[RMDB]
RNA sequence: GGGAACGACUCGAGUAGAGUCGAAAAUAGGCGAACGAGAGGCCCUCUCGUGUGCGGAGUUGUCACGCUGACAAAAUUGUUAUGAUGUCCGAUUCCGGUAGCAUCGCGGCGAUGCUUUCAUAGGACAUCUUAUGAACCCAAGAGCUUCGGGGAAGCAGAUCCAUUUAUAGUUCGCUAUAAAUGGAUCAAAAGAAACAACAACAACAAC
Reactivity to 2A3 in 0.01 (KOAc 150mM, MgCl2 10mM, bicine 150mM(pH8.5), 24C), signal-to-noise 3, nucleotides 027 to 156: u160a030g030g040c030g030a020a030c020g000a030g020a020g130g030c050c040c000u030c000u000c020g040u070g010u040g060c020g030g070a080g020u030u040g020u090c040a010c090g040c060u060g030a030c040a040a130a050a080u100u120g050u110u100a100u140g000a000u000g000u000c000c000g020a050u150u090c070c040g030g010u020a000g000c000a000u010c010g020c120g250g040c150g030a000u000g000c000u020u080u020c080a110u100a050g000g000a010c000a000u000c000u000u020a050u020g040a050a030c010c000c000a060a020g060a020g030c020u130u150c090g020g010g010g000a030a000g020c010a010
Reactivity to DMS in 0.01 (KOAc 150mM, MgCl2 10mM, bicine 150mM(pH8.5), 24C), signal-to-noise 3, nucleotides 027 to 156: u000a100g010g020c010g020a060a040c020g010a050g010a080g040g000c060c060c020u000c020u010c010g020u010g010u000g040c030g020g010a200g000u000u000g030u000c040a130c110g030c050u020g020a140c050a040a070a080a140u000u000g000u000u000a090u010g000a030u000g010u010c000c010g000a210u010u000c140c050g020g010u000a010g030c020a010u000c020g030c140g030g000c160g000a050u000g010c000u010u010u020c010a090u000a120g000g010a040c030a020u010c000u000u000a050u000g010a110a170c030c030c040a090a070g000a230g000c030u000u000c040g000g000g070g010a120a080g020c010a090
About this RNA:
This 207-nucleotide RNA was probed chemically with 2A3 and DMS. For 2A3 the reverse transcriptase was SuperScript II with manganese. For 2A3, 2,110 sequencing reads were counted. It was measured as part of the RMDB library OK3TST. Values are in units of 0.01, from 0 to 300, in steps of 10. The reactions ran in a buffer of 150 mM KOAc, 10 mM MgCl2 and 150 mM bicine (pH 8.5), at 24 C. Values cover nucleotides 27 to 156.